Structure probing data (DMS) for a 177-nucleotide construct. DMS adducts were read by reverse transcription with MarathonRT. Values cover nucleotides 27 to 126. The reactions ran in a buffer of 150 mM KOAc, 10 mM MgCl2 and 150 mM bicine (pH 8.5), at 24 C. Source: RMDB library OK2TRN, as collected in RNAgym.
RNA sequence: GGGAACGACUCGAGUAGAGUCGAAAAUUGACCGCAAAGUAGUCCGUAUCGGCGAAGAGGUCUAUAAUUACGACUGGCCUCCUUACGGGGCUGGUCGACCAGGCACAUUCGGAGACAUUCAAGCUAGAUUGAAGGUCUUCUUCGGAAGACCUUCAAUAAAAGAAACAACAACAACAAC
Reactivity to DMS in 0.01 (KOAc 150mM, MgCl2 10mM, bicine 150mM(pH8.5), 24C), signal-to-noise 2, nucleotides 027 to 126: u010u020g020a060c000c000g030c130a040a120a160g000u000a080g010u000c000c060g000u000a130u000c180g000g000c030g020a100a080g000a160g000g020u000c000u010a050u000a040a100u020u000a150c050g000a020c030u000g030g010c000c000u000c010c080u010u030a080c250g010g050g000g000c010u000g000g010u000c010g000a030c070c030a080g000g010c030a100c170a130u000u000c110g000g000a080g040a130c050a090u010u010c060a050a030g010c090u000a070g000